[RMDB]
RNA sequence: GGGAACGACUCGAGUAGAGUCGAAAAGAAAUAACUGUCGAAAAGUUAAGCGAGCGAGCGAGCGAAAGCAUGAGAGUGCAUGAAAAAUAGCGUGGAAAAGACAGGAAAGACAUGCGAAAAUAAAAGAGGGAUACUUUAUCUUCGGAUAAAGUAUCCCAAAAGAAACAACAACAACAAC
Reactivity to 2A3 in 0.01 (KOAc 150mM, MgCl2 10mM, bicine 150mM(pH8.5), 24C), signal-to-noise 2, nucleotides 027 to 126: g040a000a100a000u050a010a010c080u000g140u130c000g040a020a050a090a000g030u000u030a000a120g000c110g040a000g000c000g040a040g010c030g040a000g000c090g070a120a010a000g040c000a020u130g040a000g000a000g270u060g000c000a030u130g170a110a010a000a020a020u130a000g000c130g080u030g000g080a010a190a010a010g040a050c060a000g110g000a000a070a000g050a000c030a000u050g080c000g050a140a000a070a000u300a000a040a120a040g100a040
Reactivity to DMS in 0.01 (KOAc 150mM, MgCl2 10mM, bicine 150mM(pH8.5), 24C), signal-to-noise 1, nucleotides 027 to 126: g000a050a120a040u020a040a270c020u040g000u020c030g010a110a020a110a100g000u000u000a070a120g000c010g000a070g000c010g020a050g000c030g000a120g000c000g000a120a010a160g000c050a030u000g010a160g000a080g030u000g070c000a010u000g000a000a040a130a060a170u000a120g000c060g000u000g070g010a060a100a010a120g000a030c120a150g020g010a050a020a000g000a110c000a000u040g000c000g040a190a070a050a160u020a140a020a060a090g000a250